Description: Structure probing data (2A3 and DMS) for a 207-nucleotide construct. Reactivities are given for positions 27 through 156.

[RMDB]
RNA sequence: GGGAACGACUCGAGUAGAGUCGAAAACCUGGUUUAGGGUUCCAGGCUAGCCCUAUCUAUCGGUCGAGAUGCGAGCGCUUAAGCUCAAAUUGAGUGGCUGCGUUAGUGGUGAACGUAUCCCUAUGUUAAAACGGUAGCUGCUUCGGCAGCUACCGAACAAAUUGCAUCACUUCGGUGAUGCAAUUUGAAAAGAAACAACAACAACAAC
Reactivity to 2A3 in 0.01 (KOAc 150mM, MgCl2 10mM, bicine 150mM(pH8.5), 24C), signal-to-noise 1, nucleotides 027 to 156: c000c000u020g010g050u060u050u080a040g010g020g000u080u000c010c020a050g020g030c020u030a050g010c000c000c000u000a050u000c020u050a110u080c020g040g020u010c050g030a010g010a170u060g020c010g000a000g000c040g030c110u210u300a100a030g030c020u020c000a010a080a120u070u090g040a020g070u170g020g000c000u020g030c030g020u020u010a020g020u050g130g030u040g040a060a000c050g000u060a120u090c010c010c010u050a050u070g070u030u130a030a060a000a000c010g010g020u000a000g000c000u000g000c000u020u030c260g050g000c000a000g000c000u000a000c000c000g000a000a000
Reactivity to DMS in 0.01 (KOAc 150mM, MgCl2 10mM, bicine 150mM(pH8.5), 24C), signal-to-noise 1, nucleotides 027 to 156: c030c020u000g020g000u000u000u010a080g030g020g030u000u010c000c000a090g030g120c000u000a130g000c000c000c010u000a040u000c030u000a040u000c030g010g060u010c020g000a280g070a050u000g000c300g020a060g030c000g020c220u000u010a060a300g060c020u000c010a080a150a110u020u000g040a260g040u010g020g000c220u000g000c060g000u010u000a090g040u000g050g030u000g000a130a140c100g050u000a060u010c030c010c020u010a100u010g000u010u000a090a070a130a180c000g040g000u000a000g000c000u000g030c030u020u010c260g080g030c010a000g000c000u000a000c000c000g040a000a040
Conditions: 150 mM KOAc, 10 mM MgCl2 and 150 mM bicine (pH 8.5), 24 C.